RNA sequence: GGGAACGACUCGAGUAGAGUCGAAAAGCGCGAGCCAACCUGGACGCCGAAGGCGGAGCAAGCUUCGACGACAUCCGUGCGGCGACAUCGAGCGAAUGGAACGCCGCGCUAUCGCGAAUCGCGGUGGGAGCGGAGAGAUAUUCGUAUCUCUCCGCUCAAAAGAAACAACAACAACAAC
Reactivity to 2A3 in 0.01 (KOAc 150mM, MgCl2 10mM, bicine 150mM(pH8.5), 24C), signal-to-noise 6, nucleotides 027 to 126: g030c030g020c030g010a020g010c020c010a010a030c030c020u060g050g060a040c010g000c030c010g060a100a080g110g030c040g020g010a050g060c110a160a040g020c000u150u160c090g160a190c010g020a050c050a130u060c040c020g000u030g010c000g000g020c000g030a060c030a060u100c030g050a020g180c060g050a060a030u050g000g040a100a030c020g000c000c000g010c000g010c020u050a030u100c020g020c010g100a170a070u170c100g000c000g020g000u030g040g080
Reactivity to DMS in 0.01 (KOAc 150mM, MgCl2 10mM, bicine 150mM(pH8.5), 24C), signal-to-noise 3, nucleotides 027 to 126: g030c010g030c000g040a060g000c000c050a030a200c070c060u000g010g010a160c050g000c000c010g000a110a050g030g000c050g000g030a060g000c100a080a080g000c020u020u010c140g000a030c110g000a010c140a170u000c060c060g030u020g000c050g000g000c010g020a080c160a150u000c030g030a090g010c070g020a090a140u030g010g010a170a150c110g000c010c010g020c000g020c020u000a020u000c020g000c010g050a170a050u030c050g030c030g010g060u000g000g000